[RMDB]
Chemical mapping of a 177-nucleotide RNA with DMS and 2A3. For DMS the reverse transcriptase was MarathonRT. Source: RMDB library OK2TST, as collected in RNAgym. For 2A3 the reverse transcriptase was SuperScript II with manganese.

RNA sequence: GGGAACGACUCGAGUAGAGUCGAAAACUAUCGCUAGAGGCCUUGAACUGAGUAUUAUGUGUUUCCGCACACGGCAGUUUGCAAGCAGGCGUGUCGUUCAUUACACUCAAGGCACCUAAGCGUUAUCAAUCCCUGCGUUCUUCGGAAUGUAGGGAUUAAAAGAAACAACAACAACAAC
Reactivity to DMS in 0.01 (KOAc 150mM, MgCl2 10mM, bicine 150mM(pH8.5), 24C), signal-to-noise 9, nucleotides 027 to 126: c040u000a030u000c010g020c010u000a030g000a120g010g010c000c000u000u000g000a020a110c150u010g010a140g010u000a050u000u010a100u000g020u000g000u000u010u010c280c250g000c040a020c030a050c010g010g010c010a060g000u000u000u000g020c110a100a140g020c060a050g000g000c010g010u000g020u000c020g010u000u000c130a060u000u000a050c060a110c070u000c000a010a010g000g010c000a030c010c010u000a030a080g010c010g010u000u000a080u000c180
Reactivity to 2A3 in 0.01 (KOAc 150mM, MgCl2 10mM, bicine 150mM(pH8.5), 24C), signal-to-noise 9, nucleotides 027 to 126: c010u010a020u080c000g000c010u010a010g010a050g060g010c010c000u010u010g010a050a030c060u110g070a040g130u060a060u250u050a100u140g040u000g030u020u190u050c080c080g010c000a000c000a000c010g020g000c010a020g010u030u050u080g070c100a150a100g060c010a010g050g020c080g160u050g000u010c000g010u040u040c030a030u050u080a020c020a010c020u010c000a000a000g000g000c010a060c010c000u030a120a030g000c000g010u020u010a100u110c030